[RMDB]
RNA sequence: GGGAACGACUCGAGUAGAGUCGAAAACGGGUUCACCCUCGAUGAAAAGGGGUACAAGAUGAGCAAGUCGCUGGGGAAUGUGGUGGACCCGCGAUCCAUCAUUGAGGGCGGCAAGGACAAGAACAAGCAGUCGUACUUUGUUCGCAAAGUACGACUGAAAAGAAACAACAACAACAAC
Reactivity to DMS in 0.01 (KOAc 150mM, MgCl2 10mM, bicine 150mM(pH8.5), 24C), signal-to-noise 1, nucleotides 027 to 126: c040g010g000g000u000u000c020a000c080c010c040u000c020g030a050u010g000a140a100a110a140g010g000g000g100u000a040c180a080a130g040a090u010g010a080g000c160a080a110g000u010c040g000c150u000g000g020g040g000a070a100u000g040u010g080g020u000g000g000a040c010c000c030g000c060g020a110u000c010c010a080u000c040a050u020u010g000a090g010g020g000c080g010g010c090a040a060g000g000a120c060a060a070g000a060a040c200a040a060g000
Reactivity to 2A3 in 0.01 (KOAc 150mM, MgCl2 10mM, bicine 150mM(pH8.5), 24C), signal-to-noise 1, nucleotides 027 to 126: c010g000g030g000u040u000c000a070c000c000c000u070c070g190a170u180g050a010a030a030a000g000g010g020g010u050a040c060a060a040g070a070u110g040a070g080c050a160a020g080u040c040g000c070u020g010g010g030g090a160a190u190g100u120g040g000u010g000g020a060c000c010c000g010c000g000a020u000c000c000a020u040c050a020u080u150g040a140g040g090g020c040g000g000c050a000a060g020g010a050c070a150a020g000a090a050c050a020a000g030